RNA sequence: GGGAACGACUCGAGUAGAGUCGAAAAUUCAACCGGCAUCUCGCAGAUGCGCUGGCCGGUUCGUGGGCGCAUUCUGGCAAGCUUCGGCCAGCGUGAGGGCACCUCGGUCAGCGACGGUAUCGAUAUAGGUGGUAAUACGGUUCGCCGUAUUACCACCAAAAGAAACAACAACAACAAC
Reactivity to DMS in 0.01 (KOAc 150mM, MgCl2 10mM, bicine 150mM(pH8.5), 24C), signal-to-noise 2, nucleotides 027 to 126: u000u010c060a110a020c040c040g010g020c060a030u000c020u000c200g030c230a180g010a040u000g020c010g000c010u010g010g000c030c000g020g030u000u010c170g000u000g000g000g000c040g020c050a040u000u000c030u000g040g020c010a150a110g020c180u030u020c090g010g010c000c000a030g010c070g040u000g010a010g000g000g020c050a060c010c040u010c020g020g010u010c020a020g020c020g020a110c050g010g000u010a040u000c040g010a090u010a080u000a110
Reactivity to 2A3 in 0.01 (KOAc 150mM, MgCl2 10mM, bicine 150mM(pH8.5), 24C), signal-to-noise 1, nucleotides 027 to 126: u060u020c050a020a010c000c010g030g000c020a000u000c050u020c090g100c130a060g030a090u080g000c010g000c030u000g010g000c010c000g010g000u090u080c080g030u100g020g070g010c040g000c010a020u130u020c020u040g000g000c010a030a100g090c070u140u120c090g050g000c000c000a020g020c040g010u020g000a040g070g110g010c030a100c010c010u040c000g010g000u000c000a020g030c000g020a020c020g000g000u080a060u180c080g040a030u050a020u060a250
About this RNA: Chemical mapping of a 177-nucleotide RNA with DMS and 2A3. Source: RMDB library OK2TST, as collected in RNAgym.